[RMDB]
RNA sequence: GGGAACGACUCGAGUAGAGUCGAAAAGUUUCACAGCUUUGAAACAAUUUGCUUAGGGUUGGGAUCGUGCCUUCAAAUUAGCCUCAGAUGCACAUCCAUAUCACCUUGCUUUCCAAUUUUAAGUCUGCUGUGCAUGUGCACCCAGAGGUUGCCGGAACAAAUACAGCCAUUUCGAUGGCUGUAUUUGAAAAGAAACAACAACAACAAC
Reactivity to 2A3 in 0.01 (KOAc 150mM, MgCl2 10mM, bicine 150mM(pH8.5), 24C), signal-to-noise 3, nucleotides 027 to 156: g000u000u000u050c040a060c030a060g070c090u130u150u190g040a050a000a000c030a070a130u030u040u180g000c010u060u140a040g010g020g030u060u090g060g000g010a030u020c060g030u030g010c030c010u050u100c040a070a150a200u110u080a110g010c000c000u100c060a020g040a080u040g000c010a000c000a010u020c010c010a010u040a040u150c050a110c000c000u020u040g000c000u030u070u050c050c000a110a130u030u110u060u130a040a030g040u020c050u030g020c040u040g050u020g010c020a040u090g070u070g040c020a040c010c030c030a040g010a060g050g000u050u060g040c050c020g020g020a040a010
Reactivity to DMS in 0.01 (KOAc 150mM, MgCl2 10mM, bicine 150mM(pH8.5), 24C), signal-to-noise 3, nucleotides 027 to 156: g010u000u000u000c030a090c070a160g010c060u010u010u000g010a070a050a050c010a100a170u000u000u010g000c020u000u000a060g020g010g010u000u000g040g010g000a040u000c050g040u010g020c020c040u000u000c050a050a050a200u000u000a110g020c030c050u000c040a100g010a050u000g000c030a030c020a040u010c020c010a120u000a070u000c050a060c030c030u000u000g020c070u000u000u000c070c070a100a150u000u000u000u010a010a110g020u000c060u000g000c060u000g020u000g010c100a070u000g020u000g000c020a050c010c090c030a090g020a080g010g010u000u000g020c020c030g020g010a100a240